[RMDB]
RNA sequence: GGGAACGACUCGAGUAGAGUCGAAAAGAUAUGGAGCAUGUAUGAAGCUUAACGAAUUCGGAAACGAACUAUUAAGAACUACUUCGAAGUGCUCCUAAGUCAAAAGAGAACUCUUCGGAGUUCUCAACCUAAUUAUCAUCUUCGGAUGAUAAUUAGGAAAAGAAACAACAACAACAAC
Reactivity to 2A3 in 0.01 (KOAc 150mM, MgCl2 10mM, bicine 150mM(pH8.5), 24C), signal-to-noise 7, nucleotides 027 to 126: g020a000u050a030u140g010g000a000g000c020a060u300g030u180a060u300g030a010a010g010c000u030u000a050a000c090g180a260a300u050u010c010g010g030a040a050a050c010g000a010a010c040u060a080u100u010a020a010g010a060a050c080u190a040c010u300u010c010g060a110a020g020u000g000c000u000c000c000u010a050a000g010u000c010a000a000a230a030g010a000g000a010a000c010u000c000u100u170c300g110g000a030g010u010u010c000u000c010a000a000
Reactivity to DMS in 0.01 (KOAc 150mM, MgCl2 10mM, bicine 150mM(pH8.5), 24C), signal-to-noise 7, nucleotides 027 to 126: g010a030u000a300u010g000g000a010g010c000a010u000g000u010a170u020g010a010a010g000c010u010u000a010a020c130g000a040a180u000u000c000g010g000a130a090a190c010g020a010a020c080u000a240u000u000a000a020g000a070a050c090u010a290c010u000u000c000g010a090a300g000u000g000c000u000c000c010u000a040a080g010u010c040a070a050a080a100g000a010g000a010a010c000u000c000u000u010c210g020g010a020g010u000u000c000u000c000a030a090

This 177-nucleotide RNA was probed chemically with 2A3 and DMS. It was measured as part of the RMDB library TTRDEL. For DMS the reverse transcriptase was MarathonRT. For DMS, 8,138 sequencing reads were counted.